[RMDB]
RNA sequence: GGGAACGACUCGAGUAGAGUCGAAAAUGGUUGGACUCGUGGUACAGGCUUAAUGGCACCUAAUAAUAUUGUUUCUCAGGGAAUCGAAAAAUAUGGUGUUCGUACUUUUUCGCAGAGUGAGAUGGCAAUUUAUGCACCGUUUCGACGGUGCAUAAAUAAAAGAAACAACAACAACAAC
Reactivity to DMS in 0.01 (KOAc 150mM, MgCl2 10mM, bicine 150mM(pH8.5), 24C), signal-to-noise 2, nucleotides 027 to 126: u000g010g000u020u000g020g000a050c030u010c060g000u010g020g000u010a050c090a060g010g000c070u010u000a050a080u020g020g000c030a060c020c020u010a060a070u020a070a050u010a090u000u010g010u000u000u000c040u000c080a130g020g000g000a160a070u000c060g000a000a040a050a050a030u010a030u000g010g010u010g020u000u010c050g060u040a070c180u000u000u000u000u000c010g010c120a070g020a300g010u000g010a040g000a040u010g010g020c090a070